[RMDB]
RNA sequence: GGGAACGACUCGAGUAGAGUCGAAAACUGUUGUCAAUAAAUCUGUCGUGACUUCAGGCAUUUAUGAACGUCACCUGACCGUCGAUGGACAAGAUUACCAUCACAUUUUUGACAGUCAAACAGGAUAUCAUUGUUCAUUCUUCGGAAUGAACAAUGAAAAAGAAACAACAACAACAAC
Reactivity to 2A3 in 0.01 (KOAc 150mM, MgCl2 10mM, bicine 150mM(pH8.5), 24C), signal-to-noise 4, nucleotides 027 to 126: c000u010g030u110u060g010u030c010a020a020u060a170a090a030u040c020u030g060u080c010g000u010g010a020c000u020u000c000a030g090g000c100a160u130u190u140a180u140g010a010a010c130g000u000c000a010c010c040u070g000a020c010c030g040u080c110g010a000u000g000g040a060c100a090a090g050a180u090u180a100c000c010a000u030c000a030c020a050u060u070u010u050u060g020a000c000a020g080u130c090a040a070a020c010a010g080g010a030u040a010
Reactivity to DMS in 0.01 (KOAc 150mM, MgCl2 10mM, bicine 150mM(pH8.5), 24C), signal-to-noise 5, nucleotides 027 to 126: c010u000g030u000u000g000u010c020a050a060u000a050a060a160u010c080u000g000u010c080g010u000g020a020c010u010u000c010a010g010g020c290a120u010u010u010a070u000g000a020a030c180g010u000c020a010c030c190u000g010a050c130c160g020u000c180g020a020u000g010g020a150c160a090a130g010a180u010u010a110c010c010a020u000c010a070c110a100u000u010u000u000u000g000a010c010a080g000u000c160a090a090a050c050a030g000g000a100u010a110